Conditions: 150 mM KOAc, 10 mM MgCl2 and 150 mM bicine (pH 8.5), 24 C.
Structure probing data (2A3 and DMS) for a 177-nucleotide construct.
For DMS, 2,206 sequencing reads were counted.

RNA sequence: GGGAACGACUCGAGUAGAGUCGAAAAGCGCGUAAAUACGGCCGCUAUUCUUUCUUGCCGAACAAAAUGAGGUCGUAGCGUGUGGGGGCAGGGACACCGUCGUUUUGUUCAAGAACGGUUUGUGCGCCGAGGCAAAUUGAUUCGUCAAUUUGCCUCGAAAAGAAACAACAACAACAAC
Reactivity to 2A3 in 0.01 (KOAc 150mM, MgCl2 10mM, bicine 150mM(pH8.5), 24C), signal-to-noise 1, nucleotides 027 to 126: g010c010g000c010g010u050a000a000a080u120a050c020g000g000c000c000g020c010u040a070u100u040c020u030u110u010c030u030u160g080c030c060g010a030a010c030a020a050a020a020u080g010a000g000g020u000c050g050u040a020g060c030g030u120g040u110g010g050g010g010g000c010a070g060g070g010a010c020a000c030c030g140u060c000g000u040u000u050u050g020u030u090c040a040a010g020a030a000c020g020g040u010u000u120g040u020g000c000g000c000
Reactivity to DMS in 0.01 (KOAc 150mM, MgCl2 10mM, bicine 150mM(pH8.5), 24C), signal-to-noise 2, nucleotides 027 to 126: g010c020g020c010g020u000a040a080a150u000a050c020g010g000c010c020g000c010u000a060u010u000c080u010u000u010c050u000u000g030c140c120g010a030a040c130a050a020a030a060u000g020a140g010g020u000c060g020u000a040g010c050g040u000g020u010g010g010g000g010g010c070a040g010g000g000a070c060a020c030c050g010u000c020g010u000u000u000u000g020u010u000c090a130a080g010a020a090c030g000g020u010u010u010g030u010g020c060g030c070